[RMDB]
RNA sequence: GGGAACGACUCGAGUAGAGUCGAAAAGAUAUGGAAUGGCAAGGGAGCUGGUCGGAAACGACACAGCGUUGAUCUUGCAUUCCUAAGUCAAAAGAGGGUGUUACUAGUUCGCUAGUAACACCCUCAACGUAUAGUGUGACUUCGGUCACACUAUACGAAAAGAAACAACAACAACAAC
Reactivity to 2A3 in 0.01 (KOAc 150mM, MgCl2 10mM, bicine 150mM(pH8.5), 24C), signal-to-noise 2, nucleotides 027 to 126: g010a000u060a020u150g020g020a040a020u040g300g100c010a000a000g000g000g000a020g080c010u020g030g000u000c000g040g050a110a050a060c030g050a040c220a000c010a300g010c020g030u050u000g020a010u000c010u000u010g000c000a020u000u000c010c000u020a050a000g080u070c030a000a060a130a140g010a000g000g000g000u000g000u000u000a000c010u000a000g040u050u100c300g010c210u000a000g000u010a000a000c010a010c000c010c010u000c000a000a000
Reactivity to DMS in 0.01 (KOAc 150mM, MgCl2 10mM, bicine 150mM(pH8.5), 24C), signal-to-noise 4, nucleotides 027 to 126: g010a030u000a300u010g000g010a010a010u000g000g040c000a020a010g010g000g000a020g010c000u000g000g010u000c000g000g000a090a070a220c000g010a020c000a070c000a000g020c000g010u010u010g010a020u000c010u000u000g010c000a050u000u000c000c000u000a060a100g000u000c060a100a070a120a090g000a010g000g000g030u000g000u000u000a010c000u000a000g000u000u020c260g010c000u000a000g000u000a000a010c000a000c000c000c000u000c000a000a020
Structure probing data (2A3 and DMS) for a 177-nucleotide construct. DMS adducts were read by reverse transcription with MarathonRT.